An RNA of 177 nucleotides, treated with 2A3 and DMS and read out base by base.
[RMDB]
RNA sequence: GGGAACGACUCGAGUAGAGUCGAAAAAGCGGUGGUACGCCACCGCACUCUCUAUUUGCCUGGAUUCGAUUGUAAUUGAGAUCAAUCUCCAGUCAUAAUGGGGGGGAAGCCGUAGUACGCUACGGCAACCUCUAGGGUUAUUCGUAACCCUAGAGGUAAAAGAAACAACAACAACAAC
Reactivity to 2A3 in 0.01 (KOAc 150mM, MgCl2 10mM, bicine 150mM(pH8.5), 24C), signal-to-noise 9, nucleotides 027 to 126: a000g010c010g000g000u020g010g010u060a040c230g060c020c000a000c000c000g000c000a010c000u010c000u000c000u010a020u010u010u010g010c000c000u010g020g010a050u220u150c100g010a010u000u030g040u100a160a230u140u270g170a140g030a140u130c000a000a010u000c010u000c010c000a000g010u010c000a040u100a180a020u020g000g000g000g000g000g010g030a030a020g000c000c010g000u000a000g000u020a020c210g010c090u000a000c000g000g000c000a000
Reactivity to DMS in 0.01 (KOAc 150mM, MgCl2 10mM, bicine 150mM(pH8.5), 24C), signal-to-noise 9, nucleotides 027 to 126: a100g010c000g010g020u000g000g020u010a080c260g020c000c000a010c000c000g020c000a010c010u000c000u000c010u000a020u000u000u010g000c100c010u000g000g000a060u030u030c240g010a010u000u000g010u020a100a190u030u020g010a170g010a120u010c010a010a010u000c040u000c000c010a010g000u000c000a010u020a010a020u000g010g010g000g000g000g000g000a100a100g010c000c000g020u000a010g010u010a090c240g020c000u000a000c000g000g010c000a030
The reactions ran in a buffer of 150 mM KOAc, 10 mM MgCl2 and 150 mM bicine (pH 8.5), at 24 C.